[RMDB]
RNA sequence: GGGAACGACUCGAGUAGAGUCGAAAAGGCUACAAGCAGUCCGGCAUCGGCCGGGAGGGCCACCAGAUGAUGCUGCAGCACUACCAGCACACCAAGAACCUGCUGGUGUCCUACUCGGAUAAGGCGCUACCAGGACCACGUUCGCGUGGUCCUGGUAAAAAGAAACAACAACAACAAC
Reactivity to DMS in 0.01 (KOAc 150mM, MgCl2 10mM, bicine 150mM(pH8.5), 24C), signal-to-noise 1, nucleotides 027 to 126: g050g070c030u000a110c170a050a020g010c050a000g050u030c010c040g020g030c010a260u020c070g000g030c010c010g010g040g020a300g070g000g030c040c000a110c030c000a020g000a060u000g030a020u010g000c050u010g060c130a100g000c050a070c030u030a090c040c000a060g000c030a020c300a150c040c120a030a080g050a100a090c150c170u000g000c000u000g000g000u000g000u000c020c000u000a040c180u000c000g000g000a030u060a100a020g000g030c030g020c030
Reactivity to 2A3 in 0.01 (KOAc 150mM, MgCl2 10mM, bicine 150mM(pH8.5), 24C), signal-to-noise 2, nucleotides 027 to 126: g080g000c010u040a030c080a120a090g140c000a020g030u030c000c080g030g000c010a110u160c150g130g000c000c050g000g090g010a160g000g000g000c000c060a010c000c040a020g000a060u120g010a040u000g030c000u000g000c050a010g010c000a020c080u030a100c090c000a000g040c000a010c000a060c020c060a130a010g050a160a010c060c020u050g010c000u000g050g010u000g000u020c000c000u100a210c030u000c040g070g000a050u060a090a040g040g000c010g030c110